[RMDB]
RNA sequence: GGGAACGACUCGAGUAGAGUCGAAAAAAGAUAUGGACGCUGGGAGGCAUCGAUCUACUGAGCGCCUCCCAUGUCGGAAACGACAUGGGUUGGUGCAGGUAGGGAGCCUUAGGCGUCCUAAGUCAAACCCAUAGUCCUUCUUCGGAAGGACUAUGGGAAAAGAAACAACAACAACAAC
Reactivity to DMS in 0.01 (KOAc 150mM, MgCl2 10mM, bicine 150mM(pH8.5), 24C), signal-to-noise 1, nucleotides 027 to 126: a170a090g000a030u020a290u000g020g000a000c000g030c020u000g010g000g000a030g030g030c000a300u030c160g000a050u010c010u000a000c010u000g010a120g030c030g000c010c000u000c000c000c010a000u000g000u000c000g040g010a140a070a250c000g000a060c010a010u000g080g010g020u000u000g010g010u010g000c000a230g010g000u010a100g000g010g030a000g050c000c000u030u000a300g000g030c000g000u010c030c000u000a000a040g000u030c000a050a210a160
Reactivity to 2A3 in 0.01 (KOAc 150mM, MgCl2 10mM, bicine 150mM(pH8.5), 24C), signal-to-noise 1, nucleotides 027 to 126: a000a000g050a010u070a040u100g000g020a030c000g000c050u130g260g300g030a010g020g010c010a160u300c120g000a070u020c000u000a000c010u050g160a130g250c030g010c000c000u030c020c000c000a000u000g000u000c000g060g030a040a050a020c020g020a050c000a010u000g000g000g070u260u180g060g010u030g010c030a000g020g020u000a000g000g000g000a010g000c020c000u000u020a000g030g020c010g000u000c000c000u040a000a000g000u000c000a000a000a140